[RMDB]
RNA sequence: GGGAACGACUCGAGUAGAGUCGAAAAUGAUUGCUCUUCGGAGCAAUCACACUACCGAGGUUGUUGCUCGGUAUAAACAACAAACCCUUGGAAACUAGGGAAGAAGAAAACGAUUCGUCGUUUUCAAGAGGUACAUAGUGUUCGCACUAUGUACCUCAAAAGAAACAACAACAACAAC
Reactivity to DMS in 0.01 (KOAc 150mM, MgCl2 10mM, bicine 150mM(pH8.5), 24C), signal-to-noise 2, nucleotides 027 to 126: u000g040a010u000u000g000c000u000c000u000u040c210g000g000a030g010c000a010a010u000c000a030c140a070c090u000a210c010c000g000a000g000g000u010u000g000u000u000g010c000u000c010g000g000u000a010u020a040a020a070c090a070a070c050a060a150a300c010c000c000u000u000g010g000a090a060a160c040u000a030g000g010g040a160a080g000a060a150g000a020a020a010a030c000g000a010u000u000c220g030u000c010g010u000u000u000u000c000a110a070